[RMDB]
RNA sequence: GGGAACGACUCGAGUAGAGUCGAAAAGUUGUGCUGCGUGAGGGCCUCUCGUAUGAUCACGAGGUGUUUCUGGAGUUCCGCCUUCGAGAAUGCCGUCAUGAGCUCUCUCGCUUCUUCCAUACCUGCCUAAGAAUAGUAUGUUCGCAUACUAUUCUUAAAAAGAAACAACAACAACAAC
Reactivity to 2A3 in 0.01 (KOAc 150mM, MgCl2 10mM, bicine 150mM(pH8.5), 24C), signal-to-noise 7, nucleotides 027 to 126: g050u050u050g050u050g060c030u020g010c000g010u020g010a020g010g010g020c040c020u020c020u010c020g070u130a080u220g140a110u170c070a010c090g030a040g020g020u030g030u030u050u020c030u030g030g020a030g010u180u180c050c050g030c020c010u010u030c010g020a030g020a050a020u040g010c000c020g050u090c050a090u110g040a020g030c000u010c000u000c000u000c010g000c030u020u000c010u060u000c020c000a030u040a090c000c020u070g040c000c010
Reactivity to DMS in 0.01 (KOAc 150mM, MgCl2 10mM, bicine 150mM(pH8.5), 24C), signal-to-noise 9, nucleotides 027 to 126: g010u000u010g010u010g010c060u000g010c030g010u000g000a040g010g010g010c050c080u000c050u000c060g010u000a080u010g010a130u000c150a060c060g010a100g010g020u000g010u000u000u000c020u000g000g000a060g010u000u010c190c110g010c200c030u000u000c020g010a050g010a040a030u000g010c020c020g000u000c120a070u000g000a100g010c010u000c010u000c010u000c020g010c030u000u000c030u000u000c090c030a090u000a080c070c030u000g010c240c070
Notes
Structure probing data (2A3 and DMS) for a 177-nucleotide construct. For 2A3, 15,597 sequencing reads were counted. For DMS, 58,627 sequencing reads were counted. As a SHAPE reagent, 2A3 marks flexible, mostly unpaired nucleotides at the ribose 2'-OH.